[RMDB]
An RNA of 207 nucleotides, treated with 2A3 and DMS and read out base by base.

RNA sequence: GGGAACGACUCGAGUAGAGUCGAAAAUACCUUGAGUAUGGCUGAAUUCAGUUUAGCGUGCAUGCUCUUGGCUAUUCUCAUAGUGAUUGUCAAAUUUGGAGUUACUUAUUCGUCAAUUCAAUAUUUAAAAAGGUGCCGAUGUUCGCAUCGGCACCAACUUACAUAUCAUCUUCGGAUGAUAUGUAAGAAAAGAAACAACAACAACAAC
Reactivity to 2A3 in 0.01 (KOAc 150mM, MgCl2 10mM, bicine 150mM(pH8.5), 24C), signal-to-noise 5, nucleotides 027 to 156: u120a010c000c000u000u000g000a000g010u010a000u010g020g000c010u010g040a060a050u280u210c140a160g160u030u040u040a030g000c080g030u130g160c020a000u000g000c000u010c000u000u000g010g000c020u040a050u050u000c010u010c020a050u090a050g180u100g050a030u030u040g030u050c030a020a040a100u080u050u090g120g020a190g140u120u090a120c020u050u050a040u080u060c030g020u020c020a020a000u080u040c020a050a080u080a210u160u260u300a150a110a030a040a050g010g000u000g000c000c020g000a000u000g020u050u100c200g000c080a000u000c000g000g000c000a000c010c000a000a000
Reactivity to DMS in 0.01 (KOAc 150mM, MgCl2 10mM, bicine 150mM(pH8.5), 24C), signal-to-noise 2, nucleotides 027 to 156: u000a020c010c010u000u000g000a010g040u000a020u000g010g080c020u000g000a050a080u000u010c150a290g030u000u000u000a070g030c020g020u030g000c010a030u000g020c010u020c000u000u000g000g020c040u000a060u010u000c020u000c020a200u000a120g020u000g000a080u000u030g000u000c020a060a090a150u000u020u000g020g020a200g030u000u010a060c040u000u000a090u000u000c070g030u000c050a040a070u000u000c020a070a090u010a100u000u000u010a040a050a110a070a110g020g020u010g040c000c000g020a030u010g010u000u010c300g030c040a000u000c040g020g030c010a000c000c000a000a000

It was measured as part of the RMDB library M2RFPK. The DMS profile rests on 3,668 reads. The RNA was probed in 150 mM KOAc, 10 mM MgCl2 and 150 mM bicine (pH 8.5) at 24 C. The 2A3 profile rests on 3,235 reads.